[RMDB]
RNA sequence: GGGAACGACUCGAGUAGAGUCGAAAAGAGCUUCUUGAUGUCCAGCUCAGGAAUGUUGUACAUCUUAGACGCAUCUUUGAUGAUAUCAUUGAUGUACGAUGGAACAUUUAUCGGCUCGGCCUUGCGCCUGUAAGGCAGUUUUCGAACUGCCUUACAGAAAAGAAACAACAACAACAAC
Reactivity to 2A3 in 0.01 (KOAc 150mM, MgCl2 10mM, bicine 150mM(pH8.5), 24C), signal-to-noise 9, nucleotides 027 to 126: g040a010g000c020u050u030c020u110u140g060a080u100g070u030c060c040a020g010c020u030c070a000g030g120a060a040u070g010u030u030g060u110a030c000a010u010c000u060u160a100g030a130c130g000c030a020u010c030u030u030u050g030a030u030g030a050u040a030u240c020a020u010u020g010a010u010g020u050a050c070g010a010u030g010g030a060a000c010a020u030u060u050a170u120c030g010g000c010u010c010g030g000c010c000u030u080g050c050g030c020
Reactivity to DMS in 0.01 (KOAc 150mM, MgCl2 10mM, bicine 150mM(pH8.5), 24C), signal-to-noise 9, nucleotides 027 to 126: g010a070g020c030u000u010c060u000u000g000a070u000g000u000c030c060a070g010c080u000c080a120g010g010a050a040u000g010u010u010g010u010a170c010a010u000c010u000u000a130g010a120c260g010c020a010u000c000u000u000u000g010a030u000g010a090u010a300u010c020a160u000u000g010a010u000g010u000a060c120g010a050u000g000g000a050a050c040a030u000u000u000a060u010c100g000g010c000u000c060g010g000c040c020u000u000g010c150g010c090